[RMDB]
RNA sequence: GGGAACGACUCGAGUAGAGUCGAAAAAAUCCCGAACCAAGCUCUCGCAAGAGAGAAGGUGUAGAGACUGGAAGGCAGGCAUCCUAACGUUAAGCCGAGGAUGAAGGGACAGUCCAGACCACAAACUGGUUAACUAAAAGCUAGUUAAUUCAGGCAGCUAAACGAAAACGUUCGCGUUUUCGUUUAGAAAAGAAACAACAACAACAAC
Reactivity to DMS in 0.01 (KOAc 150mM, MgCl2 10mM, bicine 150mM(pH8.5), 24C), signal-to-noise 2, nucleotides 027 to 156: a080a080u000c010c000c030g040a140a020c040c010a030a200g000c000u010c010u000c000g030c270a280a250g000a060g000a030g020a050a090g020g000u000g010u000a110g000a140g000a120c020u010g010g050a100a030g020g010c040a050g000g000c010a030u000c030c010u010a040a070c030g010u000u020a160a130g020c060c030g020a110g010g000a030u010g000a110a020g000g010g020a040c010a080g020u000c020c010a130g000a120c040c030a090c080a080a060a070c010u000g010g010u000u000a000a030c020u000a040a120a190a150g030c290u020a030g000u000u020a010a040u000u000c010a040g010g020c080a190g010
Reactivity to 2A3 in 0.01 (KOAc 150mM, MgCl2 10mM, bicine 150mM(pH8.5), 24C), signal-to-noise 2, nucleotides 027 to 156: a000a010u100c080c010c000g020a080a000c100c020a220a070g070c010u030c000u000c010g070c050a100a010g000a000g000a000g000a030a000g000g000u040g010u060a140g050a020g020a090c020u020g000g030a050a030g120g040c060a020g100g000c000a020u000c000c000u010a020a010c010g010u000u100a030a000g050c140c010g000a010g000g000a000u020g020a040a040g110g020g000a020c010a020g020u000c000c000a010g030a050c000c070a050c080a080a150a030c030u000g020g000u010u010a010a010c000u020a110a060a120a080g100c070u000a010g020u020u020a010a010u200u300c030a010g050g010c020a030g010

This 207-nucleotide RNA was probed chemically with DMS and 2A3. DMS adducts were read by reverse transcription with MarathonRT. It was measured as part of the RMDB library ARCHII.